[RMDB]
RNA sequence: GGGAACGACUCGAGUAGAGUCGAAAAUGGGGUGGCUCGGCGGGGUUCUGGACGUCCCCGUGAUGGAGCGCGGCCCGGAGACCAGGCAAAUCCGGUCUCCAGGAGGGCGAGGCUCCGGACGAAGCGAUCUUUAUGAAGACUUCGGUCUUCAUAAAGAAAAAGAAACAACAACAACAAC
Reactivity to DMS in 0.01 (KOAc 150mM, MgCl2 10mM, bicine 150mM(pH8.5), 24C), signal-to-noise 7, nucleotides 027 to 126: u020g000g000g000g020u000g000g010c020u010c060g000g020c040g010g000g000g000u010u010c050u010g020g010a120c110g010u000c000c010c010c010g020u010g000a150u030g000g000a020g000c020g040c110g010g010c000c000c010g000g010a020g000a010c000c000a090g010g010c270a120a150a180u060c020c010g010g000u000c000u000c000c000a100g010g020a190g010g000g000c020g010a110g010g000c000u000c010c010g000g000a080c050g000a090a070g010c080g000a080
Reactivity to 2A3 in 0.01 (KOAc 150mM, MgCl2 10mM, bicine 150mM(pH8.5), 24C), signal-to-noise 7, nucleotides 027 to 126: u140g010g010g020g020u030g020g000c020u020c040g030g010c010g010g010g000g000u100u040c050u120g070g060a040c060g040u030c000c000c000c000g020u050g030a140u090g010g000a010g000c040g000c070g030g040c010c000c000g000g000a010g000a000c030c070a130g000g030c130a080a050a060u190c010c010g000g000u000c000u000c000c010a020g070g090a130g020g010g010c020g010a080g050g000c000u000c000c000g000g000a010c010g030a060a010g030c020g050a030
Structure probing data (DMS and 2A3) for a 177-nucleotide construct. 2A3 adducts were read by reverse transcription with SuperScript II with manganese.